About this RNA
Structure probing data (DMS and 2A3) for a 177-nucleotide construct. For 2A3, 1,343 sequencing reads were counted. For DMS the reverse transcriptase was MarathonRT. 2A3 adducts were read by reverse transcription with SuperScript II with manganese. Values cover nucleotides 27 to 126.

RNA sequence: GGGAACGACUCGAGUAGAGUCGAAAACGCGCAUCGAAUCAAGGGAAGCGUGCCGGUGCAGGCAAGAGACCACCGUAAGCGUCGUUGCGACCAAAUAAGCGCCGAUUCACAUCAGCGCGACUACGCAAAGAUCCCGCUGGUUCGCCAGUGGGAUCUUAAAAGAAACAACAACAACAAC
Reactivity to DMS in 0.01 (KOAc 150mM, MgCl2 10mM, bicine 150mM(pH8.5), 24C), signal-to-noise 2, nucleotides 027 to 126: c020g000c000g000c020a120u000c090g030a150a230u030c250a120a060g040g000g010a040a040g000c000g000u000g030c080c000g010g000u000g000c020a030g000g030c010a020a040g010a190g000a020c030c020a030c000c000g040u040a020a030g000c000g000u000c010g000u000u010g000c010g020a110c190c090a050a070a070u050a060a210g000c030g020c000c010g000a030u000u000c240a090c150a080u000c010a010g050c000g000c000g000a130c220u010a000c210g060c080a120
Reactivity to 2A3 in 0.01 (KOAc 150mM, MgCl2 10mM, bicine 150mM(pH8.5), 24C), signal-to-noise 1, nucleotides 027 to 126: c040g050c000g010c010a040u020c040g080a180a030u100c050a050a070g050g020g030a040a000g050c020g000u000g000c020c000g020g000u050g000c010a030g010g050c000a000a000g040a000g000a000c000c000a000c000c010g100u090a030a000g000c000g010u020c010g000u030u060g000c000g000a040c000c020a040a020a000u110a030a000g000c000g000c010c010g000a000u090u080c070a060c000a080u010c010a000g000c000g000c030g020a030c010u240a150c050g000c040a070